[RMDB]
This 207-nucleotide RNA was probed chemically with DMS and 2A3.
2A3 adducts were read by reverse transcription with SuperScript II with manganese.
Reactivities are given for positions 27 through 156.
It was measured as part of the RMDB library OK3TST.
The reactions ran in a buffer of 150 mM KOAc, 10 mM MgCl2 and 150 mM bicine (pH 8.5), at 24 C.
RNA sequence: GGGAACGACUCGAGUAGAGUCGAAAAGAGGUCGAUCUUCGAUGAGCCUGCUGCGACGCGACGACUGGCUGGGUGAUCCAUGGCAGGACUGACGAUCACUCGAGAGCGAUCGCGAGCGGCGAUCGACUCGAUCGAGGAGCCGGCUGCGGCCCCGAUGAGUGAAGUAGAGAUUCGUCUCUACUUCACUAAAAGAAACAACAACAACAAC
Reactivity to DMS in 0.01 (KOAc 150mM, MgCl2 10mM, bicine 150mM(pH8.5), 24C), signal-to-noise 3, nucleotides 027 to 156: g020a120g050g040u010c020g020a090u000c020u000u010c030g020a060u010g020a020g000c010c020u030g030c000u000g020c020g020a160c030g030c020g010a060c000g010a090c030u020g020g000c130u000g000g000g010u000g000a060u000c030c030a130u000g010g010c070a250g020g010a300c030u000g010a190c090g010a040u000c000a020c000u000c010g010a300g020a080g020c030g020a050u000c010g030c010g040a260g010c020g000g010c020g010a030u000c010g000a040c010u010c010g010a040u000c020g020a020g000g000a030g000c130c010g030g050c010u000g020c000g010g010c020c000c000c010g000a090u010g000
Reactivity to 2A3 in 0.01 (KOAc 150mM, MgCl2 10mM, bicine 150mM(pH8.5), 24C), signal-to-noise 6, nucleotides 027 to 156: g110a020g030g010u020c010g020a020u000c000u020u010c020g030a020u020g020a010g020c010c070u060g000c060u020g020c020g240a220c020g060c010g020a030c000g160a300c010u000g020g000c000u020g020g000g000u000g000a000u000c020c030a070u140g100g000c130a170g170g160a240c050u040g030a020c060g000a000u010c000a000c000u000c010g000a010g000a000g000c010g200a300u010c000g000c010g000a020g020c000g000g010c010g030a090u110c070g130a150c000u000c020g080a040u000c000g000a030g000g020a030g200c300c020g020g000c010u080g050c040g040g040c000c000c000c020g060a150u170g040